[RMDB]
RNA sequence: GGGAACGACUCGAGUAGAGUCGAAAAACAGCGAAAGUCACAAGACUUCGAACAUUAUAGCAGUUAGUAGUUGCCUAAACCCAUUGCAAUAUAUGGGACAGUAGAGGUCGCAAGCCUAUACUGUGCGAAAAGUCGCAAGGUUUCGACCUUGCGACAAACAGAGGAACGAAUUCGUUCGUUCCUCUGUAAAAGAAACAACAACAACAAC
Reactivity to 2A3 in 0.01 (KOAc 150mM, MgCl2 10mM, bicine 150mM(pH8.5), 24C), signal-to-noise 3, nucleotides 027 to 156: a000c020a010g020c010g070a220a040a000g020u010c050a080c040a300a200g030a040c020u020u010c010g000a010a030c000a100u170u220a100u230a100g110c070a050g040u040u150a020g010u060a020g000u060u040g050c000c000u060a020a110a130c020c010c000a000u010u040g010c020a000a030u030a000u000a000u120g000g020g000a020c010a000g000u010a000g000a030g070g040u090c080g060c210a040a020g000c000c000u000a010u000a010c000u000g000u010g030c010g090a040a070a010a020g020u010c000g000c000a000a010g030g000u000u030u170c190g030a040c000c000u000u000g000c010g020a000c000a000a000
Reactivity to DMS in 0.01 (KOAc 150mM, MgCl2 10mM, bicine 150mM(pH8.5), 24C), signal-to-noise 2, nucleotides 027 to 156: a080c030a090g020c040g000a060a000a050g010u000c000a110c190a120a240g010a030c020u000u000c040g000a150a060c050a090u010u000a070u000a150g030c050a060g030u000u000a100g020u000a110g000u000u000g000c000c030u000a050a110a210c000c000c010a020u000u000g000c120a160a150u000a090u000a000u010g000g010g010a100c000a020g010u000a020g000a020g070g060u000c070g030c300a040a300g000c000c010u000a050u000a000c020u010g000u000g000c050g020a070a050a010a130g020u000c000g000c030a000a030g050g010u020u000u000c260g010a050c040c000u000u000g000c000g000a000c010a020a040